[RMDB]
RNA sequence: GGGAACGACUCGAGUAGAGUCGAAAACAGAAGCGCAGGCAAAACAGAGACCCGAACCCAAAAAUGCUAAUAAUACUGAUGCUAAGAGUCAAUCAAUCAUUUUGCAGUUUCACAGUGCAAAAAACACUUACACACAUCUAACCAUCCCAGCCAUCCAAAUUAAUGCAGGAUUCGUCCUGCAUUAAUUAAAAGAAACAACAACAACAAC
Reactivity to 2A3 in 0.01 (KOAc 150mM, MgCl2 10mM, bicine 150mM(pH8.5), 24C), signal-to-noise 5, nucleotides 027 to 156: c030a010g100a120a020g030c020g000c050a020g030g010c000a040a040a050a050c030a030g070a010g030a060c000c020c030g080a020a030c020c010c010a070a080a030a030a020u080g020c020u050a050a020u070a110a010u070a140c040u040g050a050u060g030c010u040a070a020g010a000g100u050c030a010a080u030c010a020a050u050c020a050u050u040u040u030g020c010a020g020u000u110u100c060a060c020a030g070u030g010c020a020a020a020a000a040a030c060a000c030u080u110a010c050a000c010a000c000a030u010c030u050a030a030c020c000a010u030c020c020c000a000g060c040c010a020u090c100c010a000
Reactivity to DMS in 0.01 (KOAc 150mM, MgCl2 10mM, bicine 150mM(pH8.5), 24C), signal-to-noise 4, nucleotides 027 to 156: c040a150g000a110a120g020c090g030c020a070g000g010c020a050a040a120a130c060a130g010a190g010a070c030c000c030g000a070a120c040c030c030a020a060a080a110a090u000g000c040u010a070a100u020a090a120u000a120c060u010g010a070u010g010c030u010a070a100g010a120g010u010c050a030a120u000c090a060a110u030c060a170u000u000u000u000g020c010a070g010u000u000u000c080a050c100a120g000u010g030c010a000a040a090a060a070a020c050a050c050u000u000a070c040a090c050a040c040a040u000c010u010a060a080c040c020a060u000c010c010c000a130g000c040c020a060u020c050c020a060
An RNA of 207 nucleotides, treated with 2A3 and DMS and read out base by base.
Conditions: 150 mM KOAc, 10 mM MgCl2 and 150 mM bicine (pH 8.5), 24 C.
2A3 adducts were read by reverse transcription with SuperScript II with manganese.
The 2A3 profile rests on 3,827 reads.
For DMS, 6,850 sequencing reads were counted.